[RMDB]
RNA sequence: GGGAACGACUCGAGUAGAGUCGAAAAAAUCUGCUUUGUGAUGCAGGUCGAGAGUGAGUCUUCUCUCGCAAAUACCGGGCUCAACAAAUAAUAAGUGCAAACAACAUUGUACCUUUUGCUCGUAAGCAAGUAGCUGUAGCUUAAUUGCCGAAACGCCGCUGAAGCUAUGCUUCGGCAUAGCUUCAGCAAAAGAAACAACAACAACAAC
Reactivity to 2A3 in 0.01 (KOAc 150mM, MgCl2 10mM, bicine 150mM(pH8.5), 24C), signal-to-noise 2, nucleotides 027 to 156: a000a000u080c040u030g040c040u170u220u200g190u200g110a110u170g010c000a010g010g000u020c000g000a000g010a000g000u050g010a030g000u020c010u290u020c000u080c010u000c000g070c070a010a010a010u050a030c010c040g020g000g000c020u000c030a000a050c050a010a150a070u300a060a040u070a170a000g000u040g120c040a000a040a000c020a040a040c030a190u040u030g010u100a060c030c030u030u060u050u040g010c010u000c000g090u030a010a010g000c030a040a020g030u010a010g100c080u190g090u190a010g010c000u050u070a050a050u250u050g000c050c000g040a040a040a040c090g110c110c010
About this RNA:
Structure probing data (2A3) for a 207-nucleotide construct. Values cover nucleotides 27 to 156. The data come from the RNA Mapping Database (RMDB), library RSTRND. For 2A3, 506 sequencing reads were counted.